[RMDB]
Overview
Chemical mapping of a 207-nucleotide RNA with 2A3 and DMS. The 2A3 profile rests on 1,480 reads. DMS (dimethyl sulfate) methylates the pairing face of unpaired adenines and cytosines. Source: RMDB library OK3TST, as collected in RNAgym. Conditions: 150 mM KOAc, 10 mM MgCl2 and 150 mM bicine (pH 8.5), 24 C. Reactivities are rounded to 0.1 and cut off at 0 and 3. DMS adducts were read by reverse transcription with MarathonRT. For 2A3 the reverse transcriptase was SuperScript II with manganese.
RNA sequence: GGGAACGACUCGAGUAGAGUCGAAAACAUGCUUGAUUCUUCAGUUAAAUUGUAGGGGCUUUAGGUACUAUAGCUUAGGGAACUCUAAGCAUGUGAGGAUAUGCCUUGCUUCUUUAGGAAAAGCCAAGCAUGGGUGUAAUACAGAAUUGAUCAUUGCGAUUUGUAACUUGUUCGCAAGUUACAAAUCAAAAGAAACAACAACAACAAC
Reactivity to 2A3 in 0.01 (KOAc 150mM, MgCl2 10mM, bicine 150mM(pH8.5), 24C), signal-to-noise 3, nucleotides 027 to 156: c010a010u000g000c000u010u020g020a040u090u040c010u080u030c050a050g070u090u130a110a170a220u260u180g110u090a060g000g030g000g010c000u150u170u230a020g040g000u010a010c040u030a040u050a030g000c000u020u010a000g040g020g060a120a100c030u010c010u180a000a000g000c000a030u060g060u090g060a090g060g010a040u030a010u180g010c000c000u010u010g000c000u010u050c000u020u070u090a060g020g040a000a020a020a040g070c050c000a000a000g010c000a020u030g010g050g010u080g040u050a080a110u160a130c060a030g190a080a120u150u110g030a080u180c060a080u060u030g030c030
Reactivity to DMS in 0.01 (KOAc 150mM, MgCl2 10mM, bicine 150mM(pH8.5), 24C), signal-to-noise 2, nucleotides 027 to 156: c000a080u000g000c000u000u000g000a040u000u000c050u000u000c050a250g000u000u000a060a090a180u010u010g010u000a060g000g010g030g010c030u000u010u010a050g000g020u000a070c040u000a140u000a080g000c030u000u000a080g020g040g030a030a080c180u010c010u020a000a010g000c020a010u000g040u000g010a110g030g030a200u000a050u000g020c000c050u000u000g040c020u000u020c010u000u000u000a140g010g000a010a040a030a070g010c040c030a030a050g000c040a040u000g000g010g070u010g020u000a060a150u010a220c080a150g020a120a170u000u000g000a160u000c090a170u000u010g020c250